[RMDB]
RNA sequence: GGGAACGACUCGAGUAGAGUCGAAAAUAGCUGACGUUCGCGUCAGCUAAAAGCACCAAAACCUCCUGGCGGUGCGGCGCCGGCCCCGCCGGGAAGGCCCCCAACUCGAUGGGUUCGCCCAUCGAAACUAGAAAAUCAAUUUCGAUUGAUUUUCUAGAAAAGAAACAACAACAACAAC
Reactivity to 2A3 in 0.01 (KOAc 150mM, MgCl2 10mM, bicine 150mM(pH8.5), 24C), signal-to-noise 2, nucleotides 027 to 126: u030a000g000c010u000g010a000c000g030u040u030c300g000c020g100u010c000a000g010c000u000a000a000a000a010g010c020a060c080c010a040a030a090a160c010c000u000c000c000u010g010g000c000g010g030u020g010c030g030g070c070g030c070c050g050g000c000c000c000c030g000c000c000g000g000g000a000a010g000g010c000c000c000c000c000a020a050c030u000c010g000a000u000g030g000g000u030u040c190g060c030c000c000a000u000c000g000a000a010a000
Reactivity to DMS in 0.01 (KOAc 150mM, MgCl2 10mM, bicine 150mM(pH8.5), 24C), signal-to-noise 3, nucleotides 027 to 126: u000a000g010c000u000g000a020c000g010u000u010c240g020c010g020u000c000a010g010c000u000a000a010a050a130g000c160a170c040c030a100a070a090a120c010c010u000c000c010u000g010g010c030g000g000u000g000c040g030g010c040g010c090c110g010g000c010c030c010c020g010c010c010g010g010g010a020a030g020g000c020c010c000c000c020a120a100c140u000c000g010a000u000g010g000g010u000u010c230g010c000c000c000a000u010c000g010a000a040a190